[RMDB]
RNA sequence: GGGAACGACUCGAGUAGAGUCGAAAAUCGGAAGCUCGACGACAGCAGGCUAACAACCGUCGUGCAGACAUCGAGGAUCAGCUUAAGAAUGGUAAGUAUGGUAUCGCCUACACAGAUGGUACCGAACGAAUCACUCAGUUGAACCGACCUGCAGAGACUGUCGUUGAUAAUUCGUUAUCAACGACAGAAAAGAAACAACAACAACAAC
Reactivity to DMS in 0.01 (KOAc 150mM, MgCl2 10mM, bicine 150mM(pH8.5), 24C), signal-to-noise 3, nucleotides 027 to 156: u000c080g000g000a140a160g000c060u000c010g020a060c030g010a120c070a140g040c030a060g030g000c050u000a110a120c060a090a060c040c010g020u000c080g010u000g000c000a090g010a210c090a070u000c060g000a220g030g080a110u000c010a050g030c040u020u000a090a110g030a010a100u000g000g010u000a010a300g020u000a110u000g010g010u000a050u000c020g050c040c020u000a210c300a090c190a060g020a020u020g010g020u000a060c030c010g050a050a030c020g010a200a040u000c010a050c020u020c010a040g010u010u000g010a030a090c010c020g020a060c050c020u010g000c000a090g010a170g030a200
Reactivity to 2A3 in 0.01 (KOAc 150mM, MgCl2 10mM, bicine 150mM(pH8.5), 24C), signal-to-noise 7, nucleotides 027 to 156: u110c020g040g040a060a020g040c020u020c040g040a040c020g020a030c060a040g070c030a030g060g010c060u110a100a060c070a060a040c040c040g010u030c020g070u040g010c020a020g030a090c040a080u070c050g030a060g020g020a100u010c000a000g010c010u090u090a080a050g040a090a090u040g020g000u040a040a030g010u020a090u190g010g000u010a010u010c010g000c030c030u150a130c200a020c020a100g070a060u070g010g010u000a010c000c010g020a050a020c020g010a020a020u030c000a010c030u010c020a000g000u010u010g010a030a030c000c000g020a040c020c000u010g010c010a020g030a010g020a120